RNA sequence: GGGAACGACUCGAGUAGAGUCGAAAAUGAGCAAUUGCAUCAGUUGGCCUUAGCUCAAGGUUUUUAUAGAAUGGUAAACAAAUUAAGCGCUUUACAGGAAAAACGCGUGAAGUUAAACUUACUGUUCCCCACUAUUUAAUUUCGAUUAAAUAGUGGGAAAAGAAACAACAACAACAAC
Reactivity to 2A3 in 0.01 (KOAc 150mM, MgCl2 10mM, bicine 150mM(pH8.5), 24C), signal-to-noise 8, nucleotides 027 to 126: u120g010a020g000c050a090a150u190u160g030c010a130u120c090a140g160u090u190g080g000c010c000u050u050a030g000c020u030c040a010a010g070g010u020u030u020u100u110a190u040a060g010a010a020u010g020g000u030a030a040a010c080a060a120a040u120u080a100a010g010c010g000c010u060u060u110a100c100a090g150g050a200a120a050a040a030c060g000c000g010u020g010a030a010g020u010u070a100a180a060c020u010u010a010c000u010g010u010u000c000
Reactivity to DMS in 0.01 (KOAc 150mM, MgCl2 10mM, bicine 150mM(pH8.5), 24C), signal-to-noise 4, nucleotides 027 to 126: u010g010a010g010c010a130a090u040u000g000c050a100u040c150a120g020u030u010g000g000c010c040u000u020a080g020c010u010c010a100a070g000g020u010u000u000u000u010a080u030a140g000a010a000u000g000g000u000a010a010a070c060a090a030a070u000u010a080a300g000c010g000c020u010u000u010a070c150a210g030g010a120a060a070a050a030c100g020c010g000u000g020a140a110g000u000u010a070a120a110c140u000u000a000c000u000g000u000u010c000